An RNA of 177 nucleotides, treated with 2A3 and DMS and read out base by base. The DMS profile rests on 1,121 reads. Source: RMDB library TTRDES, as collected in RNAgym.

[RMDB]
RNA sequence: GGGAACGACUCGAGUAGAGUCGAAAAGAUAUGGACGAUGUGUGGGAGAUCCGGAUCGGAAACGAUCCGAAGAUCAUCGAUCACAUGAAUCGUCCUAAGUCAAAAUCCUCAUCUUCGGAUGAGGAAAGCAAAUGUUAACGUUCGCGUUAACAUUUGCAAAAGAAACAACAACAACAAC
Reactivity to 2A3 in 0.01 (KOAc 150mM, MgCl2 10mM, bicine 150mM(pH8.5), 24C), signal-to-noise 1, nucleotides 027 to 126: g010a010u030a000u050g000g000a000c000g030a040u130g050u000g010u010g030g050g030a170g000a000u000c010c000g040g010a020u000c000g020g000a000a040a000c000g000a000u000c020c000g020a060a030g010a010u000c010a010u300c040g070a050u110c010a010c050a000u090g150a050a230u090c010g020u010c000c000u010a040a000g010u000c000a000a010a010a300u000c000c000u020c000a010u000c010u110u110c300g210g020a010u000g000a000g000g000a070a030a010
Reactivity to DMS in 0.01 (KOAc 150mM, MgCl2 10mM, bicine 150mM(pH8.5), 24C), signal-to-noise 1, nucleotides 027 to 126: g000a050u000a080u030g010g000a010c010g000a090u020g030u000g010u020g020g010g000a040g000a050u000c000c000g000g000a020u000c000g000g040a020a020a060c000g000a010u000c000c010g000a050a090g000a000u000c010a240u010c250g010a120u000c000a000c000a000u000g010a140a080u010c010g000u000c000c010u000a010a070g010u000c030a120a140a060a150u010c010c000u010c000a030u000c000u010u000c250g010g000a010u010g000a020g000g000a010a020a120